Source information:
An RNA of 177 nucleotides, treated with DMS and 2A3 and read out base by base. The 2A3 profile rests on 5,710 reads. DMS adducts were read by reverse transcription with MarathonRT. For DMS, 7,178 sequencing reads were counted. Values cover nucleotides 27 to 126. It was measured as part of the RMDB library OK2TRN.
RNA sequence: GGGAACGACUCGAGUAGAGUCGAAAAUUGCCUAUUGGCUACUUUUGCUAUUCAGAUCAUCUGUGAAUGUAAGUGACUGUCUGCUGUGUUCGCAGUGUGGUUACUGGGAAAACAGAGCUCUCUCUCCCCUGUUUCAACUAUUCGUAGUUGAAACAGGAAAAGAAACAACAACAACAAC
Reactivity to DMS in 0.01 (KOAc 150mM, MgCl2 10mM, bicine 150mM(pH8.5), 24C), signal-to-noise 5, nucleotides 027 to 126: u000u000g010c010c000u000a160u010u010g010g010c020u000a070c120u010u000u010u000g010c060u000a090u010u000c100a050g010a080u010c080a080u000c030u000g000u000g010a080a070u000g000u010a100a050g020u000g010a040c040u000g010u010c040u000g010c010u010g020u000g020u010u010c170g000c010a020g010u000g020u000g020g010u000u010a030c030u000g010g020g010a080a080a100a100c040a030g000a050g000c150u000c050u000c040u000c060u010c060c110
Reactivity to 2A3 in 0.01 (KOAc 150mM, MgCl2 10mM, bicine 150mM(pH8.5), 24C), signal-to-noise 5, nucleotides 027 to 126: u080u030g040c030c000u110a260u110u190g000g000c020u070a120c030u160u140u090u090g030c010u060a110u110u150c040a030g030a110u030c010a050u000c060u000g050u030g120a160a080u090g040u170a070a010g000u010g050a030c020u060g050u130c050u040g030c020u030g060u070g080u260u110c100g000c030a020g000u040g020u040g140g000u010u030a030c030u020g040g030g060a010a050a010a010c020a010g030a010g020c000u000c000u000c010u000c030u030c020c000